[RMDB]
RNA sequence: GGGAACGACUCGAGUAGAGUCGAAAAUAGCGAAGUAGGAUUUUAUGCGUCAAGUGUUCACAGGCUGGGGAGUCGCCGUGAAACGAUAAGCAGAAAGCGUGCUGCUUACGAUAUAAUUUCCGCACCCAUAAGAAGUCUCUGUUCGCAGAGACUUCAACACUCCUAUAGGGUUCGCCCUAUAGGAGUGAAAAGAAACAACAACAACAAC
Reactivity to 2A3 in 0.01 (KOAc 150mM, MgCl2 10mM, bicine 150mM(pH8.5), 24C), signal-to-noise 5, nucleotides 027 to 156: u120a010g050c020g060a110a010g060u110a080g030g030a030u020u030u050u040a020u080g030c020g020u050c070a100a060g030u050g070u180u040c030a020c090a090g010g020c010u110g050g000g040g000a040g100u120c020g000c010c020g020u030g000a030a010a000c010g020a070u010a040a010g000c010a010g050a100a180a030g140c120g080u140g040c020u000g000c000u010u010a010c010g000a000u010a010u010a100a030u000u030u000c000c000g010c050a050c000c030c000a030u070a100a080g000a000a000g000u010c000u000c000u010g050u040u060c150g010c080a000g000a000g000a000c000u000u000c000a000a000
Reactivity to DMS in 0.01 (KOAc 150mM, MgCl2 10mM, bicine 150mM(pH8.5), 24C), signal-to-noise 1, nucleotides 027 to 156: u010a080g010c050g020a080a130g000u010a080g040g000a070u000u000u000u000a010u010g020c040g010u000c080a080a130g040u000g030u030u010c030a030c020a100g030g000c030u000g040g010g040g010a060g000u010c010g030c010c000g050u000g010a030a010a080c020g000a160u000a010a010g000c010a000g000a060a080a190g010c180g030u010g030c000u000g000c000u000u010a010c020g030a180u000a040u000a030a060u000u000u000c020c020g040c000a160c010c020c020a080u000a150a150g000a020a010g020u000c010u000c000u000g040u000u000c300g020c020a040g000a010g010a010c000u000u000c020a000a150
Chemical mapping of a 207-nucleotide RNA with 2A3 and DMS. It was measured as part of the RMDB library M2RFPK. Reactivities are given for positions 27 through 156. The RNA was probed in 150 mM KOAc, 10 mM MgCl2 and 150 mM bicine (pH 8.5) at 24 C.